[RMDB]
RNA sequence: GGGAACGACUCGAGUAGAGUCGAAAAACAUUCAUUGACGCAGCACGAGGCCCCGCAGGUGUGGAGUCUGAUGUUGAGACCAAUGAAAUUGUUGACUCUGUGCAGUAUGCUCAUAAACAUGACAUACCUAGUCGAUUCUUCGGAAUCGACAAAAGAAACAACAACAACAAC
Reactivity to DMS in 0.01 (KOAc 150mM, MgCl2 10mM, bicine 150mM(pH8.5), 24C), signal-to-noise 3, nucleotides 027 to 129: a000c000a130u030u030c030a030u030u030g000a050c000g100c040a080g100c030a020c130g020a040g020g020c020c000c000c050g060c070a210g000g000u070g040u000g030g020a110g020u000c020u020g030a100u000g030u040u040g020a100g000a090c000c000a000a040u030g010a000a000a000u000u000g050u010u070g010a070c060u040c020u000g030u050g020c160a120g010u060a020u010g000c180u040c020a030u000a070a140a120c180a190u010g010a030c000a080u080a050c020c050u000a120
Reactivity to 2A3 in 0.01 (KOAc 150mM, MgCl2 10mM, bicine 150mM(pH8.5), 24C), signal-to-noise 6, nucleotides 027 to 129: a030c050a070u040u030c010a010u010u010g030a000c010g020c080a000g020c000a000c080g120a070g000g020c000c010c010c010g000c030a200g080g240u300g030u030g180g010a050g010u000c010u060g100a170u000g010u020u010g010a070g060a060c030c000a000a000u010g000a030a020a040u160u050g020u000u050g000a020c010u000c000u030g080u080g040c000a000g000u000a000u000g020c040u000c020a020u080a060a170a050c170a070u040g020a000c000a000u010a010c000c020u000a030